RNA sequence: GGGAACGACUCGAGUAGAGUCGAAAAUGAGGCUGGGCAGGAACCAGUUGAGGCUGGGGAGAGACCCCUUGGAGGGGACAACCAGCCACAGGGGCACAACAUCAAUGACAUCCUUAUGACCUCACAGCUCCUCUAAUCCUUUCGAGGAUUAGAGGAGAAAAGAAACAACAACAACAAC
Reactivity to 2A3 in 0.01 (KOAc 150mM, MgCl2 10mM, bicine 150mM(pH8.5), 24C), signal-to-noise 2, nucleotides 027 to 126: u080g030a040g030g010c020u050g000g070g040c050a060g050g050a060a070c010c010a020g030u050u030g030a050g050g010c030u020g000g030g040g030a150g010a020g040a130c000c010c020c050u050u110g240g070a090g060g010g000g000a000c010a030a020c000c000a010g000c000c000a000c020a020g010g000g040g000c030a010c030a150a040c020a060u140c050a050a120u090g010a050c010a100u030c020c000u030u080a080u140g070a120c010c010u020c030a040c030a040g020
Reactivity to DMS in 0.01 (KOAc 150mM, MgCl2 10mM, bicine 150mM(pH8.5), 24C), signal-to-noise 2, nucleotides 027 to 126: u020g030a080g000g010c040u000g020g020g000c040a090g030g000a160a140c020c040a060g000u010u000g000a080g000g020c000u000g000g000g000g010a300g020a170g020a300c010c000c000c000u010u000g010g020a260g030g000g010g020a060c100a060a200c000c010a010g000c000c000a020c100a020g020g020g000g000c060a060c110a050a080c090a080u000c090a030a080u000g000a090c080a060u000c010c010u000u020a110u000g000a060c010c000u000c070a130c240a130g010